[RMDB]
RNA sequence: GGGAACGACUCGAGUAGAGUCGAAAAAGUAAAGGCCGAUAUUGCAGUGUACCAGGAUGUGUACGCAGUCGAUGCUCCGUCUACCAUCUACGCGCAGGCCGACAAAGGUACGCGAGUGGUAUACUGGUCACUGACUAACAUUCGUGUUAGUCAGUGAAAAAGAAACAACAACAACAAC
Reactivity to DMS in 0.01 (KOAc 150mM, MgCl2 10mM, bicine 150mM(pH8.5), 24C), signal-to-noise 6, nucleotides 027 to 126: a100g010u020a050a080a120g020g010c020c020g010a110u010a070u010u010g020c020a020g010u000g020u000a010c010c010a060g010g000a190u010g010u000g010u000a000c010g010c080a290g010u000c030g000a080u000g010c030u000c110c010g010u010c120u020a070c110c110a060u000c080u000a070c100g020c300g000c120a080g010g020c070c000g000a040c060a030a140a180g000g010u000a020c010g010c010g020a300g010u000g000g000u010a010u000a020c010u000g000g000
Reactivity to 2A3 in 0.01 (KOAc 150mM, MgCl2 10mM, bicine 150mM(pH8.5), 24C), signal-to-noise 5, nucleotides 027 to 126: a000g150u130a050a050a050g120g060c050c030g050a110u070a140u180u300g100c000a000g010u010g010u020a010c000c000a010g040g010a050u200g050u010g000u030a010c040g000c070a020g000u030c010g040a050u110g040c010u050c050c020g040u030c010u070a120c020c050a100u040c020u100a030c020g040c000g020c060a050g050g080c030c000g000a000c000a020a190a010g150g000u010a010c000g000c000g000a010g090u010g000g000u010a010u020a010c010u010g000g030